[RMDB]
RNA sequence: GGGAACGACUCGAGUAGAGUCGAAAACACAACGCCGCGGUAGACACGUACUGUUUCUGUCUGCUGCGCGGCGCGGCCGUGGUAAAAAAUAACACGGUGAUGAGCCCCACGCGUAUCACCGACCAGAAUAACAUCAGCGUGGUCACCUGCGCCUCGGAUGUACUCCCUUCUUCGGAAGGGAGUACAUAAAAGAAACAACAACAACAAC
Reactivity to 2A3 in 0.01 (KOAc 150mM, MgCl2 10mM, bicine 150mM(pH8.5), 24C), signal-to-noise 1, nucleotides 027 to 156: c020a000c050a110a120c060g050c050c010g000c000g060g000u000a000g000a000c050a040c130g100u210a110c200u100g050u110u070u030c010u000g000u010c000u000g000c040u020g000c000g000c000g000g020c030g000c000g000g020c000c020g000u030g010g040u150a050a030a000a000a030a140u240a080a030c040a000c010g000g020u020g000a100u010g020a010g100c080c010c000c000a010c040g000c010g010u110a060u020c050a010c040c040g150a200c020c050a130g070a060a110u150a110a010c040a090u170c030a000g020c020g000u000g000g010u040c020a010c030c010u080g020c000g030c020c000u020c040g080g020
This 207-nucleotide RNA was probed chemically with 2A3. It was measured as part of the RMDB library OK3TST. For 2A3 the reverse transcriptase was SuperScript II with manganese. Conditions: 150 mM KOAc, 10 mM MgCl2 and 150 mM bicine (pH 8.5), 24 C.